About this RNA:
An RNA of 177 nucleotides, treated with DMS and read out base by base. Reactivities are given for positions 27 through 126. For DMS, 475 sequencing reads were counted. The RNA was probed in 150 mM KOAc, 10 mM MgCl2 and 150 mM bicine (pH 8.5) at 24 C. Reactivities are rounded to 0.1 and cut off at 0 and 3. The data come from the RNA Mapping Database (RMDB), library OK2TST.
RNA sequence: GGGAACGACUCGAGUAGAGUCGAAAAGGUACGCAGGGAAGUGAAACAUCUCAGUACCUGCAGGAAAGGAUACUCCGUGAGUAGUGGCGAGCGAAAGCGGAUCAGGCUAAACCGAGUACGUGUGAUACACUGGCUCGGCUUUCGAGCCGAGCCAGUGAAAAGAAACAACAACAACAAC
Reactivity to DMS in 0.01 (KOAc 150mM, MgCl2 10mM, bicine 150mM(pH8.5), 24C), signal-to-noise 1, nucleotides 027 to 126: g010g020u010a020c120g000c120a070g000g010g050a070a120g080u000g020a100a200a300c300a110u000c000u020c000a120g000u000a170c000c010u020g050c110a110g000g000a080a040a040g020g000a110u000a010c300u000c000c000g000u000g020a050g000u000a110g000u000g000g000c230g020a300g010c000g010a060a070a300g010c010g000g000a000u060c170a160g020g000c010u000a010a250a120c000c000g010a010g060u000a020c070g000u000g000u000g020a300u000a300